[RMDB]
RNA sequence: GGGAACGACUCGAGUAGAGUCGAAAACAUUGUUCUGAUCCUCUGAAGAUCAGCUAUUAGAAGAGAAAGAUCAGUUAAGUCCUUUGGACCUGAUCAGCUUGAUACAAGAACUACUGAUUUCAACUUCAAAACGGGUGCUACUUCGGUAGCACCCGAACGUUUGACUUUUCUUCGGAAAAGUCAAACGAAAAGAAACAACAACAACAAC
Reactivity to 2A3 in 0.01 (KOAc 150mM, MgCl2 10mM, bicine 150mM(pH8.5), 24C), signal-to-noise 2, nucleotides 027 to 156: c050a070u110u090g040u200u000c010u000g010a020u030c010c010u120c180u160g120a120a040g020a020u020c000a000g060c010u170a170u270u160a110g010a020a010g000a010g020a090a080a000g010a030u000c000a000g020u050u130a130a020g010u040c000c000u090u210u250g010g010a030c000c010u050g000a050u070c010a000g030c030u060u100g000a020u070a220c070a070a000g040a120a030c060u090a010c020u060g020a070u010u060u100c070a120a040c020u100u030c000a020a000a120a080c040g000g010g010u000g000c010u010a000c000u010u010c110g110g020u000a000g000c000a000c000c000c000g000a010a000